[RMDB]
RNA sequence: GGGAACGACUCGAGUAGAGUCGAAAAGAUAUGGACGUUCUACCCACCGAACUACUCGGAUAAGGUUCGGAAACGAACCGUAACGAGCGAGGAACGUCCUAAGUCAAAACUGCACUUCGGUGCAGAACACCUGCAUAUCCUUCGGGAUAUGCAGGUGAAAAGAAACAACAACAACAAC
Reactivity to 2A3 in 0.01 (KOAc 150mM, MgCl2 10mM, bicine 150mM(pH8.5), 24C), signal-to-noise 2, nucleotides 027 to 126: g120a050u250a160u220g000g000a020c010g020u020u040c020u060a300c040c000c020a050c010c010g030a100a040c030u200a060c000u300c000g000g000a000u010a070a000g000g000u010u000c000g020g040a090a010a010c020g020a010a020c010c000g000u020a050a040c000g000a020g020c000g010a050g060g010a000a000c020g020u000c010c000u010a050a000g060u000c100a030a010a170a230c010u030g000c000a010c000u040u030c300g070g010u010g000c020a000g000a000a000
Reactivity to DMS in 0.01 (KOAc 150mM, MgCl2 10mM, bicine 150mM(pH8.5), 24C), signal-to-noise 2, nucleotides 027 to 126: g020a140u000a210u000g000g020a020c000g010u000u000c010u000a090c000c000c000a300c100c020g000a050a100c060u010a240c010u000c030g010g030a100u000a040a180g000g000u000u000c000g000g000a030a070a190c000g010a000a010c010c000g000u000a140a300c080g100a050g000c020g010a140g000g000a010a000c000g030u020c030c020u000a000a060g000u000c110a050a080a100a100c000u000g000c010a010c000u000u000c160g010g000u000g000c010a000g000a060a130